[RMDB]
RNA sequence: GGGAACGACUCGAGUAGAGUCGAAAACGGAACACCGCCUGGGUGCUCAGGGGUCGAACCGUCGCGGACGUCGCGGUCUGGGCGUCCGCCGGUUGGGUGCCGGGGCCCGAACGUUCGGUCUCUGACGAAAUAGUCUGGAGUUCGCUCCAGACUAUUUAAAAGAAACAACAACAACAAC
Reactivity to DMS in 0.01 (KOAc 150mM, MgCl2 10mM, bicine 150mM(pH8.5), 24C), signal-to-noise 2, nucleotides 027 to 126: c050g000g000a100a070c100a060c040c070g030c080c010u010g020g010g000u000g020c050u000c010a040g010g010g000g000u020c010g000a000a060c010c040g010u010c150g010c000g010g020a030c000g010u000c000g000c120g000g020u010c090u030g010g000g000c020g020u000c000c030g010c000c010g020g000u000u000g000g010g010u000g000c040c040g000g010g000g030c010c020c010g000a080a200c120g010u010u000c020g010g000u000c020u000c000u000g000a120c170g010
Reactivity to 2A3 in 0.01 (KOAc 150mM, MgCl2 10mM, bicine 150mM(pH8.5), 24C), signal-to-noise 4, nucleotides 027 to 126: c030g020g020a040a020c060a030c020c030g110c040c040u110g030g030g040u180g130c030u040c050a070g030g010g000g030u020c010g020a010a010c040c020g030u120c130g000c000g010g000a010c000g010u010c040g000c140g300g070u130c130u260g050g010g000c000g010u010c000c000g000c010c000g020g000u040u040g030g010g010u100g110c030c020g000g000g040g000c000c020c000g020a050a040c030g060u050u030c010g000g000u000c000u000c010u070g040a030c040g020